This 177-nucleotide RNA was probed chemically with DMS and 2A3. For DMS, 9,498 sequencing reads were counted. For 2A3 the reverse transcriptase was SuperScript II with manganese. For 2A3, 3,893 sequencing reads were counted. Conditions: 150 mM KOAc, 10 mM MgCl2 and 150 mM bicine (pH 8.5), 24 C.
RNA sequence: GGGAACGACUCGAGUAGAGUCGAAAAGGGUGAUGAAUCUGCUACGCGAAGCUGGCUAUCUGAAGAUUGCGCUGGUUGGACUUGAAACGGUUGGUGCGGAUCAGCCGAAUGCCGCGCCGGCGUCGCAUAGUCAUAUGCGAUUCGUCGCAUAUGACUAAAAAGAAACAACAACAACAAC
Reactivity to DMS in 0.01 (KOAc 150mM, MgCl2 10mM, bicine 150mM(pH8.5), 24C), signal-to-noise 6, nucleotides 027 to 126: g000g000g010u000g010a070u010g010a080a080u000c050u000g020c030u000a070c120g020c060g020a060a090g010c040u010g000g010c040u000a070u000c050u000g020a090a120g000a090u000u000g030c090g020c020u000g010g020u000u000g020g010a080c090u010u000g010a100a090a110c060g010g010u000u000g010g010u000g010c080g000g000a050u000c080a100g010c070c070g010a070a100u000g000c020c020g010c060g020c020c010g010g010c020g010u000c070g010c100a140
Reactivity to 2A3 in 0.01 (KOAc 150mM, MgCl2 10mM, bicine 150mM(pH8.5), 24C), signal-to-noise 3, nucleotides 027 to 126: g020g030g020u050g040a090u040g050a030a070u020c030u090g010c010u050a020c040g020c020g050a040a020g020c030u040g040g000c020u030a030u050c040u090g080a060a030g000a070u030u130g000c040g000c040u020g010g000u040u060g000g030a030c010u040u120g070a070a060a020c020g000g060u070u020g000g030u060g010c030g040g060a020u040c020a010g080c030c050g050a090a040u160g030c000c000g010c000g010c000c000g030g000c000g010u040c010g000c030a050